[RMDB]
RNA sequence: GGGAACGACUCGAGUAGAGUCGAAAAGAUAUGGAUCCUUCUUGCUGGCGAAGAACAAGAAGGAGUCGUACUUCGGAAACGAAGUACGACUCCUUCUUGGGAGCCAUCAAGAGAGGAUCCUAAGUCACUACCUACUAUACUUCGGUAUAGUAGGUAGAAAAGAAACAACAACAACAAC
Reactivity to 2A3 in 0.01 (KOAc 150mM, MgCl2 10mM, bicine 150mM(pH8.5), 24C), signal-to-noise 1, nucleotides 027 to 126: g030a010u080a050u210g000g000a010u000c000c000u000u000c010u000u030g000c040u000g000g050c040g300a300a050g010a120a090c000a000a000g010a000a000g020g000a000g020u040c010g070u010a000c040u000u040c040g050g080a230a070a090c040g020a020a030g050u020a000c040g020a010c010u000c000c010u010u000c000u020u010g000g000g020a000g000c000c000a010u000c000a000a020g060a040g160a010g010g000a000u000c000c000u000a030a020g020u020c030a030
Reactivity to DMS in 0.01 (KOAc 150mM, MgCl2 10mM, bicine 150mM(pH8.5), 24C), signal-to-noise 2, nucleotides 027 to 126: g020a070u000a300u010g000g000a020u000c000c000u010u000c010u000u010g010c080u010g000g000c010g010a180a230g020a110a170c010a010a020g020a050a040g030g000a000g040u000c010g000u000a010c010u000u010c000g030g000a120a120a240c010g020a020a030g010u030a010c000g000a000c020u000c000c000u000u010c010u000u000g000g000g000a120g020c010c000a010u000c010a000a020g010a050g020a010g020g010a000u000c000c000u000a010a100g010u000c030a300